Source: RMDB library OK2TST, as collected in RNAgym.
The record gives the reactivity of an RNA of 177 nucleotides to DMS and 2A3.
The 2A3 profile rests on 8,712 reads.
For 2A3 the reverse transcriptase was SuperScript II with manganese.
DMS adducts were read by reverse transcription with MarathonRT.
As a SHAPE reagent, 2A3 marks flexible, mostly unpaired nucleotides at the ribose 2'-OH.
RNA sequence: GGGAACGACUCGAGUAGAGUCGAAAAUGGAUAAUGCUCGCCACGCUGGCGGUAGUGUUUGUGGUUGGUUUUCGGGUGCUGACAUCCGGGGCCAGAAAAGCGAUUCGCCGUCUCAGCGAUCGGCUGACAUCAUAUGAGCAUUCGUGCUCAUAUGAUGAAAAGAAACAACAACAACAAC
Reactivity to DMS in 0.01 (KOAc 150mM, MgCl2 10mM, bicine 150mM(pH8.5), 24C), signal-to-noise 8, nucleotides 027 to 126: u010g000g010a110u010a080a070u010g010c090u000c070g010c010c020a120c050g000c040u000g010g010c000g000g010u000a040g030u000g000u000u000u010g020u010g020g020u000u000g010g010u000u000u000u010c010g010g010g030u000g010c300u010g010a150c040a010u000c000c000g000g000g000g000c010c010a030g000a060a050a070a120g000c010g010a070u010u000c030g010c000c010g000u000c090u000c030a080g000c000g010a070u000c120g020g020c000u000g010a140
Reactivity to 2A3 in 0.01 (KOAc 150mM, MgCl2 10mM, bicine 150mM(pH8.5), 24C), signal-to-noise 6, nucleotides 027 to 126: u140g060g020a070u080a190a070u190g030c040u040c060g000c000c000a030c010g020c020u020g010g000c030g010g010u060a200g000u040g090u040u060u220g110u060g040g080u090u040g020g030u060u030u080u200c000g020g000g000u040g040c200u200g140a170c010a020u000c010c000g000g000g010g010c010c000a010g090a010a140a010a010g020c020g040a100u070u070c020g000c010c000g050u040c100u030c070a010g010c020g100a200u150c090g010g000c030u020g020a010

The RNA was probed in 150 mM KOAc, 10 mM MgCl2 and 150 mM bicine (pH 8.5) at 24 C.